[RMDB]
RNA sequence: GGGAACGACUCGAGUAGAGUCGAAAACAGCUCAUGCCGUGGCAGAUCGAAGUGGCACGCGUGGCAUCAGAGAAACGCGUUGAUGAUCCACGGCGUUACCGUUACCCGAUUGUGGUGCUCACGGUGCGAGGCGUGCUAUGUUCGCAUAGCACGCCUCAAAAGAAACAACAACAACAAC
Reactivity to DMS in 0.01 (KOAc 150mM, MgCl2 10mM, bicine 150mM(pH8.5), 24C), signal-to-noise 2, nucleotides 027 to 126: c080a090g020c010u020c070a040u000g020c000c000g010u010g000g020c300a180g020a020u000c020g010a060a130g020u000g000g000c300a040c000g030c060g040u000g000g030c060a070u000c140a030g010a200g020a020a100a050c130g010c150g010u000u010g040a040u010g040a110u010c010c000a010c040g020g000c050g000u000u000a080c020c000g010u000u000a070c100c120c000g000a110u010u020g010u010g000g000u010g030c040u010c060a020c040g020g010u000g010c100
Reactivity to 2A3 in 0.01 (KOAc 150mM, MgCl2 10mM, bicine 150mM(pH8.5), 24C), signal-to-noise 2, nucleotides 027 to 126: c020a030g080c030u050c080a020u200g020c000c000g010u010g020g000c020a010g020a130u050c000g060a210a010g030u140g030g030c000a000c000g000c000g000u030g010g000c010a030u050c020a060g130a020g050a120a170a010c100g040c070g050u010u110g020a060u060g030a020u020c020c000a010c020g090g000c020g000u000u020a070c020c020g010u000u070a010c030c040c000g050a060u100u210g160u090g070g110u090g000c030u030c060a010c000g020g000u040g040c040